[RMDB]
RNA sequence: GGGAACGACUCGAGUAGAGUCGAAAAGCAAGUCGCAUCGCAAAACCGCGGCAAGUGGAGUUAGCGAGAGGAGGCUGGGUUUUGGCUUCCUUAAGCAAUCGGUCACCGAGAAGGUGUGGUCGUUAACUAGACAGUUUUCUGUUCGCAGAAAACUGAAGACACGAGAACCUUUCGAGGUUCUCGUGUCAAAAGAAACAACAACAACAAC
Reactivity to 2A3 in 0.01 (KOAc 150mM, MgCl2 10mM, bicine 150mM(pH8.5), 24C), signal-to-noise 1, nucleotides 027 to 156: g050c040a000a070g030u050c020g060c040a110u040c110g010c110a010a040a130a100c010c030g010c000g000g000c100a040a030g020u010g040g070a140g030u010u190a010g000c020g000a020g000a000g090g000a000g030g000c020u060g290g130g000u020u150u120u250g010g000c000u000u000c010c000u010u010a020a000g000c010a000a040u010c020g020g040u000c000a000c000c030g040a020g100a140a090g080g070u110g000u000g090g000u010c000g030u030u100a050a040c000u030a040g070a070c000a010g000u000u000u000u000c000u000g090u040u130c220g010c030a000g030a000a000a000a000c000u000g000a010a020

This 207-nucleotide RNA was probed chemically with 2A3. It was measured as part of the RMDB library M2RFPK. The RNA was probed in 150 mM KOAc, 10 mM MgCl2 and 150 mM bicine (pH 8.5) at 24 C. For 2A3 the reverse transcriptase was SuperScript II with manganese.